[RMDB]
RNA sequence: GGGAACGACUCGAGUAGAGUCGAAAACGCGCAGGGAUGUUUUCGAAUCUUUGUUUAUGCUCUCCCUUUGACUGAUUCACAGUUACGAGCAUGGAUUCGCAAAGAUAGGCGUCUCAAAGGGAGCGCGGCUGAGCUCACUAUUCGUAGUGAGCUCAGCAAAAGAAACAACAACAACAAC
Reactivity to 2A3 in 0.01 (KOAc 150mM, MgCl2 10mM, bicine 150mM(pH8.5), 24C), signal-to-noise 1, nucleotides 027 to 126: c040g010c000g010c010a040g000g000g020a040u020g060u020u100u150u230c040g040a120a100u000c000u000u010u060g030u040u110u030a020u020g020c000u010c000u030c020c050c000u020u040u040g000a000c010u010g060a190u160u110c040a040c000a270g010u030u060a060c090g000a000g020c000a040u080g060g010a140u100u130c080g020c060a020a020a020g050a020u060a050g010g010c000g020u030c000u020c010a040a060a020g080g010g110a090g050c000g000c000g020
Reactivity to DMS in 0.01 (KOAc 150mM, MgCl2 10mM, bicine 150mM(pH8.5), 24C), signal-to-noise 2, nucleotides 027 to 126: c020g020c040g070c020a110g010g010g000a020u000g000u000u000u000u000c060g010a080a050u000c010u000u010u000g010u010u020u000a040u010g010c010u010c010u000c120c120c090u000u000u000g000a010c070u000g020a160u000u010c270a170c050a070g000u000u000a080c190g000a010g000c040a060u010g030g020a160u000u000c200g010c050a030a010a040g000a100u000a100g000g000c000g050u000c000u010c000a050a080a130g010g030g010a090g050c060g000c010g000